Structure probing data (2A3 and DMS) for a 177-nucleotide construct. The reactions ran in a buffer of 150 mM KOAc, 10 mM MgCl2 and 150 mM bicine (pH 8.5), at 24 C. The DMS profile rests on 2,430 reads. The data come from the RNA Mapping Database (RMDB), library M2PK50. Values cover nucleotides 27 to 126.

RNA sequence: GGGAACGACUCGAGUAGAGUCGAAAACAUGUGUACUUCGGUACACAUGAAAUGACCGCCAAUAUUGGCUAAGGCUACACGGACGGCCGGGUCAAAUGCCGAAAAUCGUUGCGUUCGCGCAACGAAACGACAAGACAUUGUUCGCAAUGUCUUGUCGAAAAGAAACAACAACAACAAC
Reactivity to 2A3 in 0.01 (KOAc 150mM, MgCl2 10mM, bicine 150mM(pH8.5), 24C), signal-to-noise 4, nucleotides 027 to 126: c000a000u000g010u000g000u000a000c010u030u060c200g080g000u000a000c000a000c010a000u000g000a020a010a020u110g000a000c010c020g010c020c010a270a090u260a270u300u170g010g010c070u160a190a180g010g000c000u020a030c120a020c110g040g000a010c010g020g000c000c000g000g010g000u010c010a020a010a010u050g000c010c000g000a070a000a000a010u020c000g000u000u000g010c010g030u040u040c230g000c000g000c070a000a000c000g000a020a020a000
Reactivity to DMS in 0.01 (KOAc 150mM, MgCl2 10mM, bicine 150mM(pH8.5), 24C), signal-to-noise 3, nucleotides 027 to 126: c000a020u000g020u000g010u000a000c000u000u010c220g020g010u000a000c000a000c000a010u000g000a010a100a090u000g000a020c000c010g040c010c000a070a240u020a100u000u010g010g010c010u010a060a030g040g010c000u000a060c140a060c020g000g010a040c040g000g000c000c010g010g000g000u000c020a040a050a030u000g000c000c010g010a230a050a080a090u010c000g020u000u000g000c000g030u000u010c280g020c020g010c000a000a010c010g000a000a040a060